[RMDB]
RNA sequence: GGGAACGACUCGAGUAGAGUCGAAAAGGGUGAUGUCUCCUAACCUUUAUCAAUGGGGGCACUCGGUCGUGCUGUGGGUAGAAAUUUUAUUUCGUGCCUACCUUAGGCGCUUGUCGUCGGGAGUAUGUGGGACUGAUGAACUUCGGUUCAUCAGUAACGUAAUCACUUGGUUCGCCAAGUGAUUACGAAAAGAAACAACAACAACAAC
Reactivity to 2A3 in 0.01 (KOAc 150mM, MgCl2 10mM, bicine 150mM(pH8.5), 24C), signal-to-noise 5, nucleotides 027 to 156: g040g000g000u060g030a090u040g020u020c000u030c020c020u030a070a120c020c020u120u200u140a200u190c130a100a120u220g000g020g000g000g000c010a010c030u030c030g040g000u020c020g000u040g030c030u060g020u050g010g010g000u020a020g150a030a040a020u160u210u190u140a170u070u130u090c070g020u090g010c010c010u010a040c000c000u050u110a060g010g000c010g000c030u110u220g120u180c010g000u010c020g000g030g030a040g040u110a140u200g080u110g000g010g030a000c000u010g000a000u000g000a000a000c010u030u050c210g080g000u000u000c000a000u010c000a000g000u000a010a000
Reactivity to DMS in 0.01 (KOAc 150mM, MgCl2 10mM, bicine 150mM(pH8.5), 24C), signal-to-noise 2, nucleotides 027 to 156: g000g020g000u000g010a030u000g020u000c010u000c000c000u000a120a120c050c070u010u020u020a090u000c120a080a140u020g040g020g050g050g020c020a040c050u000c000g000g010u000c070g030u000g000c050u010g040u000g010g040g010u000a290g000a020a040a050u000u010u000u000a100u010u030u000c100g000u000g010c010c010u000a030c020c090u010u010a130g040g010c050g000c070u000u000g010u010c040g000u000c000g020g040g000a130g030u000a080u000g010u000g010g010g010a100c000u000g000a010u000g000a020a030c000u000u000c300g070g030u000u000c000a010u000c000a010g020u010a030a180

Annotation: Conditions: 150 mM KOAc, 10 mM MgCl2 and 150 mM bicine (pH 8.5), 24 C. Structure probing data (2A3 and DMS) for a 207-nucleotide construct. 2A3 adducts were read by reverse transcription with SuperScript II with manganese.